[RMDB]
RNA sequence: GGGAACGACUCGAGUAGAGUCGAAAAUGUGCGUGCACGACAAGUAUCAGGUUGGCUUACUAAACGAUCGGGAAAACUGAACGGUUCAUCUCAGUAGUCUAGUCUAAUAGAAGCUUGGCAAGCAAGAGUCGUUCGUCCUAUUCGUAGGACGAGCGACAAAAGAAACAACAACAACAAC
Reactivity to 2A3 in 0.01 (KOAc 150mM, MgCl2 10mM, bicine 150mM(pH8.5), 24C), signal-to-noise 8, nucleotides 027 to 126: u220g020u030g010c040g020u030g020c030a010c080g090a050c060a060a040g040u050a060u120c040a030g100g030u050u030g050g000c020u030u100a030c020u090a050a100a060c060g070a070u070c020g010g000g030a040a050a030a080c030u070g050a100a020c070g060g020u090u060c040a120u010c050u000c040a060g030u040a000g010u020c060u050a010g010u000c010u020a020a070u050a130g070a110a000g020c000u020u030g010g000c050a060a030g010c030a080a010g050a030
Reactivity to DMS in 0.01 (KOAc 150mM, MgCl2 10mM, bicine 150mM(pH8.5), 24C), signal-to-noise 4, nucleotides 027 to 126: u040g030u030g020c030g040u010g000c030a050c130g000a110c100a050a090g000u030a090u000c050a100g020g020u000u010g000g010c120u020u020a040c040u020a040a020a070c120g000a090u020c060g000g000g000a030a070a050a030c030u000g000a080a080c110g010g000u000u000c110a070u010c050u010c040a040g010u010a100g000u010c040u000a040g000u000c040u010a020a130u030a090g010a080a250g000c010u010u010g010g000c040a060a160g000c110a020a070g000a230